The record gives the reactivity of an RNA of 177 nucleotides to 2A3 and DMS. The reactions ran in a buffer of 150 mM KOAc, 10 mM MgCl2 and 150 mM bicine (pH 8.5), at 24 C. Reactivities are given for positions 27 through 126. DMS adducts were read by reverse transcription with MarathonRT. Source: RMDB library M2PK90, as collected in RNAgym.
RNA sequence: GGGAACGACUCGAGUAGAGUCGAAAAGACGAACGAAAACACAAAUGUUCCACGGUGCAGAAGGGUCGCUCACAUGAGGAUCACCCAUGUAACUCGGACAGGAUAUGCUUUUGGGAAAAAGAGAGAAACUAUCAAAUCGAUUCGUCGAUUUGAUAGUAAAAGAAACAACAACAACAAC
Reactivity to 2A3 in 0.01 (KOAc 150mM, MgCl2 10mM, bicine 150mM(pH8.5), 24C), signal-to-noise 6, nucleotides 027 to 126: g060a010c060g010a080a010c030g040a030a030a110a000c080a010c030a050a090a090u090g020u130u020c020c020a030c050g030g030u030g000c020a020g030a160a070g080g000g010u040c050g050c140u020c010a150c030a170u260g020a050g040g010a030u090c030a080c040c000c000a000u050g020u020a050a040c010u020c050g020g000a010c010a030g060g000a050u070a020u190g030c030u050u050u050u060g040g020g030a070a110a010a040a020g100a000g010a000g030a050a120
Reactivity to DMS in 0.01 (KOAc 150mM, MgCl2 10mM, bicine 150mM(pH8.5), 24C), signal-to-noise 6, nucleotides 027 to 126: g010a100c090g010a120a120c040g000a050a040a060a040c070a050c100a040a160a130u000g010u000u000c010c040a070c160g000g010u000g010c020a040g010a110a120g010g010g010u000c070g020c030u000c020a110c140a090u010g010a020g000g010a070u010c080a080c030c020c020a100u010g010u000a050a060c040u000c150g010g010a040c040a030g000g000a110u000a040u000g000c010u000u000u000u000g010g000g010a030a040a040a060a060g000a090g000a100g000a080a070